[RMDB]
RNA sequence: GGGAACGACUCGAGUAGAGUCGAAAAUCUGAAUCCUUCGGGAUUCAGAAAAGGCGGAGGGCCCGCCGGAACCGCUAUACUGGUGGAGGUUCCAAACCACCCAAAGGACUAACUUCGGUUAGUCCAACAUAACUUACUUCUUCGGAAGUAAGUUAUGAAAAGAAACAACAACAACAAC
Reactivity to 2A3 in 0.01 (KOAc 150mM, MgCl2 10mM, bicine 150mM(pH8.5), 24C), signal-to-noise 3, nucleotides 027 to 126: u000c000u000g000a000a000u010c000c010u000u030c100g110g010g000a000u000u000c010a000g010a020a020a000a000g010g000c020g010g010a070g060g010g040c200c000c000g000c000c000g010g000a010a010c010c000g000c040u080a050u140a290c200u300g230g020u080g030g060a040g010g000u020u000c000c010a000a000a010c010c010a020c010c000c000a070a020a040g010g000a000c000u010a010a000c010u050u110c220g030g000u010u000a000g000u000c000c000a000a000
Reactivity to DMS in 0.01 (KOAc 150mM, MgCl2 10mM, bicine 150mM(pH8.5), 24C), signal-to-noise 2, nucleotides 027 to 126: u000c000u010g010a020a000u000c000c000u000u010c190g020g000g000a010u000u000c000a000g000a030a030a130a170g000g010c000g000g000a110g010g000g020c260c000c000g020c000c000g010g000a020a000c000c000g000c010u000a080u010a140c270u000g010g020u010g010g010a060g000g000u000u000c010c000a060a180a010c030c010a050c000c000c020a110a100a140g000g000a020c000u000a010a010c000u000u010c170g020g000u000u000a000g000u000c000c010a030a060